[RMDB]
An RNA of 207 nucleotides, treated with 2A3 and read out base by base.
For 2A3 the reverse transcriptase was SuperScript II with manganese.
It was measured as part of the RMDB library OK3TST.
Conditions: 150 mM KOAc, 10 mM MgCl2 and 150 mM bicine (pH 8.5), 24 C.

RNA sequence: GGGAACGACUCGAGUAGAGUCGAAAAGAAAGAAAGAAAGAAAGGUAUGAAGUCCUAUUCACGCCUGAUAGGAUAAACUUCAUAUUGAUCGUGUAUGUGCUAACGCACAUACACGAAUGCGCAUGCAGAACUGCAUGCAUGAACAUAAGGCGUGCAACACCCCAUCGCAUUUCGAUGCGAUGGGGUGAAAAGAAACAACAACAACAAC
Reactivity to 2A3 in 0.01 (KOAc 150mM, MgCl2 10mM, bicine 150mM(pH8.5), 24C), signal-to-noise 1, nucleotides 027 to 156: g030a010a060a000g040a040a040a000g080a090a090a010g050a010a110a000g000g020u030a000u000g000a000a000g000u020c000c000u000a000u000u080c120a000c000g000c010c010u000g000a000u000a000g000g020a000u120a140a260a000c000u000u000c000a010u000a020u010u130g030a050u000c000g000u000g000u000a000u000g100u000g060c120u160a150a030c110g000c020a000c000a000u000a000c000a000c000g020a000a000u100g030c050g000c000a000u000g000c000a040g110a300a090c200u030g000c000a000u010g010c000a030u060g080a040a060c130a050u270a000a010g000g010c000g010u050g000c020a000a140